[RMDB]
Conditions: 150 mM KOAc, 10 mM MgCl2 and 150 mM bicine (pH 8.5), 24 C. An RNA of 207 nucleotides, treated with 2A3 and read out base by base.

RNA sequence: GGGAACGACUCGAGUAGAGUCGAAAAAUACGUUCGCACUAGCCGCUUAGGCUAGCCAUCGCCUUGAAAUCUCUCCUAUUGGUUAGAGGAUCGAUGGUCACCCCAAAUAGGAUAGCGAGGGAAGCACGCUUGAGGCUGAACCGCGAAAUAGUAUCAAGUUAAACUGCACCUUCGGGUGCAGUUUAACAAAAGAAACAACAACAACAAC
Reactivity to 2A3 in 0.01 (KOAc 150mM, MgCl2 10mM, bicine 150mM(pH8.5), 24C), signal-to-noise 1, nucleotides 027 to 156: a010u120a040c070g060u050u210c030g020c070a070c080u000a000g000c000c000g090c200u260u150a070g000g010c000u000a000g070c010c000a000u010c000g000c010c000u000u030g050a230a090a000u040c040u000c000u000c000c000u000a000u000u010g000g000u000u000a030g000a030g050g000a030u280c030g000a000u030g000g090u030c030a110c000c000c010c040a030a000a000u000a000g010g000a010u010a000g000c010g020a220g080g010g000a070a000g050c030a030c100g040c020u090u120g110a100g150g000c000u010g000a030a000c020c000g010c050g030a040a020a000u070a010g160u070a020u170c100a120a000